[RMDB]
Structure probing data (DMS) for a 177-nucleotide construct. It was measured as part of the RMDB library OK2TST.

RNA sequence: GGGAACGACUCGAGUAGAGUCGAAAAUCGUUGACCUUCACCAGGGUGUCGAGCACUUGACCCAGCGCCAGAGCCUCGCCUGGCCGCUGCUCGAAGCGGUGCAGUGACACGUUGCCGGUGCUCAGUGGUUCCACUGACCGUUCGCGGUCAGUGGAACAAAAGAAACAACAACAACAAC
Reactivity to DMS in 0.01 (KOAc 150mM, MgCl2 10mM, bicine 150mM(pH8.5), 24C), signal-to-noise 1, nucleotides 027 to 126: u000c100g030u010u000g000a150c140c040u000u000c050a050c060c030a120g010g050g000u000g010u000c020g010a190g010c000a050c060u010u000g020a190c080c060c030a030g000c010g030c010c010a030g000a060g020c060c180u020c210g000c070c000u000g000g030c080c070g000c000u000g010c100u000c080g030a140a050g000c110g000g000u000g050c020a040g010u000g010a030c020a000c060g010u000u010g030c050c080g000g000u000g010c210u000c030a050g010u030g010